RNA sequence: GGGAACGACUCGAGUAGAGUCGAAAAGAAGAGAAGCGCGCGAAUUGGAAACCAGCGAACCCUAUUACGCGCGCAAGGAACCGGGCCUUGGUUCCUUGGAAAGACUAGAUAAUGUCGCUGGUAAAGACCUAGUAUAGCUGUUCGCAGCUAUACUAGGAAAAGAAACAACAACAACAAC
Reactivity to DMS in 0.01 (KOAc 150mM, MgCl2 10mM, bicine 150mM(pH8.5), 24C), signal-to-noise 4, nucleotides 027 to 126: g010a170a090g020a130g020a150a130g030c000g000c000g050c010g000a090a020u020u000g010g010a300a080a070c010c020a010g000c020g000a040a160c120c000c020u000a030u010u010a080c010g000c020g000c010g010c000a000a000g000g010a000a010c000c000g030g000g020c160c150u020u030g010g000u000u010c000c010u000u000g000g000a120a060a060g000a110c130u020a090g000a110u040a090a070u030g020u000c000g010c010u000g000g000u020a060a130a130g000a170
Reactivity to 2A3 in 0.01 (KOAc 150mM, MgCl2 10mM, bicine 150mM(pH8.5), 24C), signal-to-noise 7, nucleotides 027 to 126: g110a040a020g080a010g020a100a020g040c000g000c000g000c010g010a010a010u040u040g030g030a080a060a100c000c010a000g010c000g000a100a130c020c000c010u010a020u010u100a090c000g000c000g000c000g000c000a000a000g000g000a000a000c010c000g040g240g030c010c050u110u140g010g000u010u000c000c000u000u010g030g050a110a040a000g070a020c100u140a040g060a200u160a210a060u190g040u060c000g000c000u010g000g000u020a020a020a010g030a000
Chemical mapping of a 177-nucleotide RNA with DMS and 2A3.
It was measured as part of the RMDB library OK1LIB.
The reactions ran in a buffer of 150 mM KOAc, 10 mM MgCl2 and 150 mM bicine (pH 8.5), at 24 C.
Values are in units of 0.01, from 0 to 300, in steps of 10.